Chemical mapping of a 177-nucleotide RNA with 2A3 and DMS. For DMS the reverse transcriptase was MarathonRT. Source: RMDB library OK2TRN, as collected in RNAgym. Reactivities are rounded to 0.1 and cut off at 0 and 3. The DMS profile rests on 4,790 reads. The 2A3 profile rests on 2,202 reads.

RNA sequence: GGGAACGACUCGAGUAGAGUCGAAAACGGUCGUGUGGUGGUGUCGUACAAGGAGAUGCAGUUGUUAGCUGGGUACACGCACCUUGUGUUCGAGACCGCGGAUGCCCUGAGGGACGUGGAUGAGGGCCACGUGUGCGUAUUUCGAUACGCACACGUGAAAAGAAACAACAACAACAAC
Reactivity to 2A3 in 0.01 (KOAc 150mM, MgCl2 10mM, bicine 150mM(pH8.5), 24C), signal-to-noise 1, nucleotides 027 to 126: c030g010g050u080c060g010u070g020u030g210g010u000g020g030u040g060u030c030g020u020a010c010a020a020g110g010a110g010a060u080g080c030a040g120u140u050g150u130u050a060g040c060u050g000g000g070u020a040c030a010c060g020c000a070c000c000u000u020g020u010g020u040u120c000g000a010g030a020c000c000g020c020g020g010a020u080g030c010c000c020u030g050a090g020g060g030a050c080g040u060g060g030a080u100g030a050g000g000g060c040
Reactivity to DMS in 0.01 (KOAc 150mM, MgCl2 10mM, bicine 150mM(pH8.5), 24C), signal-to-noise 3, nucleotides 027 to 126: c070g010g020u000c050g030u020g020u010g010g020u000g020g020u000g020u010c050g000u010a050c050a040a050g010g010a100g000a090u000g010c030a090g000u000u000g010u020u020a110g020c040u000g000g000g010u010a060c070a070c060g000c030a060c030c010u000u010g010u000g010u010u000c020g000a040g000a050c040c020g030c040g030g000a130u000g020c020c030c010u000g010a150g000g000g010a060c070g000u000g000g010a120u010g000a080g000g000g010c060